RNA sequence: GGGAACGACUCGAGUAGAGUCGAAAAGAUAUGGAUGGUGGGAGCUAUGUGGUCGGAAACGACCACCUAGCGAAGAACACCACGUCCUAAGUCAAAAGGGCAUCACCAGUUCGCUGGUGAUGCCCAACUCCUAUUGACACUUCGGUGUCAAUAGGAGAAAAGAAACAACAACAACAAC
Reactivity to DMS in 0.01 (KOAc 150mM, MgCl2 10mM, bicine 150mM(pH8.5), 24C), signal-to-noise 1, nucleotides 027 to 126: g010a030u000a300u010g000g010a010u010g010g080u000g000g000g000a170g000c000u000a000u000g040u000g030g010u000c020g000g010a060a020a110c000g000a000c020c000a000c000c020u020a010g000c000g020a070a130g000a100a100c170a110c000c000a000c050g010u010c000c010u000a050a130g020u000c030a060a030a100a080g010g000g070c000a000u010c020a000c000c000a000g000u000u000c260g000c010u060g000g010u000g000a010u010g010c010c000c000a000a000
Structure probing data (DMS) for a 177-nucleotide construct.
DMS (dimethyl sulfate) methylates the pairing face of unpaired adenines and cytosines.
The reactions ran in a buffer of 150 mM KOAc, 10 mM MgCl2 and 150 mM bicine (pH 8.5), at 24 C.
DMS adducts were read by reverse transcription with MarathonRT.
For DMS, 1,016 sequencing reads were counted.
It was measured as part of the RMDB library TTRDEL.